RNA sequence: GGGAACGACUCGAGUAGAGUCGAAAACAGUGGGACUAGACCCUGCUGGCUGUAGUCCUUACCGCGACGGUGACGGUAGGACGCGAUUAACUUCGUUGGUAGUCACCGCCCUUAAUGGAACGGCUAACCUACUGCGAGGCUUCGGCCUCGCAGUAGGAAAAGAAACAACAACAACAAC
Reactivity to 2A3 in 0.01 (KOAc 150mM, MgCl2 10mM, bicine 150mM(pH8.5), 24C), signal-to-noise 1, nucleotides 027 to 126: c010a020g020u110g000g040g050a040c090u170a100g050a150c070c000c000u000g010c040u040g020g070c020u150g040u120a040g030u000c030c000u040u290a030c000c000g050c030g010a070c070g040g010u040g000a020c000g020g020u010a020g010g080a010c040g000c010g000a010u050u050a130a190c300u000u000c000g000u030u150g120g070u030a010g090u000c000a000c060c000g060c000c000c000u160u130a260a180u210g010g080a090a040c000g000g000c030u060a050a030